[RMDB]
RNA sequence: GGGAACGACUCGAGUAGAGUCGAAAAAUAUACCAGAAGGGACUUAUUCAAUCAACGUAUCUGGUAAGGAUGCAGAAAAAUUGGUUGGAGAAAGUUCUAUUUACGACGGAAUGAAUGGAAGAAAUGGGCCAUACUAUAGCUUCGGCUAUAGUAUGGCAAAAGAAACAACAACAACAAC
Reactivity to DMS in 0.01 (KOAc 150mM, MgCl2 10mM, bicine 150mM(pH8.5), 24C), signal-to-noise 2, nucleotides 027 to 126: a060u090a070u010a140c000c010a120g020a060a300g040g000g010a000c010u050u000a220u000u010c000a010a000u000c030a010a030c090g010u000a190u000c020u020g000g030u090a170a040g000g020a070u070g020c000a030g000a000a010a100a210a130u000u000g010g050u000u030g010g000a060g000a090a060a000g000u000u000c010u000a100u030u010u020a060c080g000a030c050g010g020a050a010u020g000a060a120u000g020g000a110a020g020a060a050a060u010g000g030
Reactivity to 2A3 in 0.01 (KOAc 150mM, MgCl2 10mM, bicine 150mM(pH8.5), 24C), signal-to-noise 2, nucleotides 027 to 126: a000u100a000u040a050c020c000a000g120a030a240g030g000g010a000c000u010u110a030u050u020c000a000a000u000c000a000a000c000g030u000a000u040c000u040g000g100u130a090a060g070g110a140u250g170c000a020g030a000a010a000a000a000u000u000g000g000u000u000g000g000a000g000a130a000a000g000u000u000c000u030a000u000u150u000a080c090g010a020c020g010g080a020a000u140g030a130a080u060g090g210a040a040g080a010a140a060u120g150g090
This 177-nucleotide RNA was probed chemically with DMS and 2A3. The DMS profile rests on 1,728 reads. It was measured as part of the RMDB library OK1LIB.